The data come from the RNA Mapping Database (RMDB), library OK1LIB. Structure probing data (2A3 and DMS) for a 177-nucleotide construct. The reactions ran in a buffer of 150 mM KOAc, 10 mM MgCl2 and 150 mM bicine (pH 8.5), at 24 C. In probing experiments dimethyl sulfate is read out at A N1 and C N3, which are open when not base-paired. For 2A3, 6,066 sequencing reads were counted. For DMS, 3,448 sequencing reads were counted.
RNA sequence: GGGAACGACUCGAGUAGAGUCGAAAAGAUUUUGAUCAUGUAUUGAGUACUCCUGUCUUGUACUCGGUAUUCUGUUCAUCAGACAGGAGAUGAACAGUGCGGAACGCUUGAUCAGAUCGUCAUUACAGGGUUCCGUUUUCUUCGGAGAACGGAACCCAAAAGAAACAACAACAACAAC
Reactivity to 2A3 in 0.01 (KOAc 150mM, MgCl2 10mM, bicine 150mM(pH8.5), 24C), signal-to-noise 8, nucleotides 027 to 126: g020a020u090u120u130u110g000a000u010c000a010u030g010u030a030u010u070g020a010g010u000a010c020u070c080c100u150g160u300c140u210u150g000u000a010c000u000c000g000g000u030a030u030u040c000u000g000u000u000c000a000u000c010a010g230a300c020a100g060g180a170g040a050u000g000a000a000c000a000g000u000g030c040g030g140a230a100c150g000c020u000u000g000a000u000c000a000g000a020u010c010g080u030c040a060u050u220a090c080a110
Reactivity to DMS in 0.01 (KOAc 150mM, MgCl2 10mM, bicine 150mM(pH8.5), 24C), signal-to-noise 2, nucleotides 027 to 126: g000a020u000u000u000u020g000a000u000c000a000u000g000u000a040u020u010g000a000g000u000a000c020u020c110c140u060g010u000c090u050u040g030u000a000c010u010c010g000g000u000a010u010u000c020u000g000u000u010c030a000u000c000a040g040a200c270a110g020g010a160g000a010u000g010a000a000c000a010g000u010g000c040g000g040a120a190c120g020c010u020u000g000a000u010c000a020g000a010u000c020g000u010c130a030u070u000a160c260a170